[RMDB]
Structure probing data (2A3 and DMS) for a 177-nucleotide construct.
RNA sequence: GGGAACGACUCGAGUAGAGUCGAAAAGCUCACGACAGAGAACAAACGGUUGCGCUCUAAACUUAGGCAAGCCAGGGAGGCUCUGCGCAAGAAAGAGGGAGGUGAUGACGCCUCUGUUGAGCAACUGACUCAUGGCACUGUUCGCAGUGCCAUGAGUAAAAGAAACAACAACAACAAC
Reactivity to 2A3 in 0.01 (KOAc 150mM, MgCl2 10mM, bicine 150mM(pH8.5), 24C), signal-to-noise 3, nucleotides 027 to 126: g000c000u000c020a060c090g140a000c070a010g130a000g030a140a090c030a050a050a000c010g000g030u000u020g020c080g050c050u000c020u030a110a290a100c000u030u090a030g050g040c010a010a000g000c020c030a050g150g130g070a110g040g020c020u050c130u070g000c110g060c000a020a030g050a090a070a000g080a010g060g040g000a070g030g000u010g040a300u210g100a120c000g010c000c000u000c000u000g020u040u040g000a010g000c030a000a000c010u030g030
Reactivity to DMS in 0.01 (KOAc 150mM, MgCl2 10mM, bicine 150mM(pH8.5), 24C), signal-to-noise 2, nucleotides 027 to 126: g040c010u000c020a080c080g080a140c110a120g000a110g000a080a030c210a060a120a250c000g000g080u000u000g000c030g000c000u000c020u030a010a090a090c040u010u040a140g040g000c030a030a030g010c000c000a140g000g040g170a240g000g010c000u000c070u010g030c000g020c000a110a070g000a010a210a040g000a000g060g030g000a060g030g020u000g030a200u040g000a060c090g000c000c000u000c000u000g000u060u000g000a070g000c000a000a040c020u000g000
Overview: Reactivities are rounded to 0.1 and cut off at 0 and 3. For DMS the reverse transcriptase was MarathonRT. The reactions ran in a buffer of 150 mM KOAc, 10 mM MgCl2 and 150 mM bicine (pH 8.5), at 24 C.